The data come from the RNA Mapping Database (RMDB), library RFM100. This 177-nucleotide RNA was probed chemically with DMS and 2A3. The RNA was probed in 150 mM KOAc, 10 mM MgCl2 and 150 mM bicine (pH 8.5) at 24 C. For 2A3 the reverse transcriptase was SuperScript II with manganese. In probing experiments dimethyl sulfate is read out at A N1 and C N3, which are open when not base-paired.
[RMDB]
RNA sequence: GGGAACGACUCGAGUAGAGUCGAAAAGUUCUCUUGCCAGGACACAGGAAACGCGUUGGUAUAAAUUCUUGUUUGGAGGCUGCAAAAAGCGUCGCACAGAGAAGGGGGAGGAGUGGCUGAUAAGUCACUAACUACUGCGCUUCGGCGCAGUAGUUAGAAAAGAAACAACAACAACAAC
Reactivity to DMS in 0.01 (KOAc 150mM, MgCl2 10mM, bicine 150mM(pH8.5), 24C), signal-to-noise 3, nucleotides 027 to 126: g000u000u000c010u000c000u010u020g010c000c010a050g000g000a110c110a070c080a010g020g000a060a100a120c120g010c100g040u000u020g010g000u020a110u020a040a080a110u030u000c030u010u000g010u020u020u000g020g020a110g000g000c050u020g000c130a060a030a090a120a070g010c030g020u000c020g000c080a040c110a080g000a070g020a050a090g000g000g010g000g010a090g000g010a120g030u000g000g000c000u000g000a110u020a050a080g010u000c100a110
Reactivity to 2A3 in 0.01 (KOAc 150mM, MgCl2 10mM, bicine 150mM(pH8.5), 24C), signal-to-noise 2, nucleotides 027 to 126: g020u030u000c040u000c010u080u070g030c020c050a020g030g030a020c000a010c040a180g020g120a100a110a020c070g050c000g080u050u060g030g080u210a030u080a170a120a050u060u050c040u110u100g080u100u120u110g080g060a080g050g000c000u000g020c070a100a080a020a000a060g020c050g020u030c030g010c010a070c000a010g030a020g000a020a130g010g020g000g020g000a070g000g010a050g050u010g050g000c000u000g040a040u040a180a070g010u070c000a000